[RMDB]
RNA sequence: GGGAACGACUCGAGUAGAGUCGAAAAUGAUCGAGAGAUCUAACGAUGUACGCGAGUCAAGUGCACAGACUCGAGCGAAAGCUCGGUCGAAAGACCGCGUACAUCGGUCGGCGAGUGUACGGUCGACAUCCACGUCGAGGUUCGCCUCGACGUGGAUAAAAGAAACAACAACAACAAC
Reactivity to DMS in 0.01 (KOAc 150mM, MgCl2 10mM, bicine 150mM(pH8.5), 24C), signal-to-noise 1, nucleotides 027 to 126: u010g010a010u000c010g010a280g000a190g010a010u010c030u010a120a170c010g030a020u000g000u000a010c010g000c000g010a060g020u000c000a070a120g070u020g010c050a000c070a300g010a020c000u000c000g060a030g000c000g000a160a100a190g000c000u000c000g020g000u000c010g000a080a080a150g000a050c000c000g010c010g000u010a000c010a000u000c000g000g010u000c030g000g000c030g030a030g000u000g000u000a010c010g030g000u000c000g020a120c240

Structure probing data (DMS) for a 177-nucleotide construct.
The reactions ran in a buffer of 150 mM KOAc, 10 mM MgCl2 and 150 mM bicine (pH 8.5), at 24 C.
DMS adducts were read by reverse transcription with MarathonRT.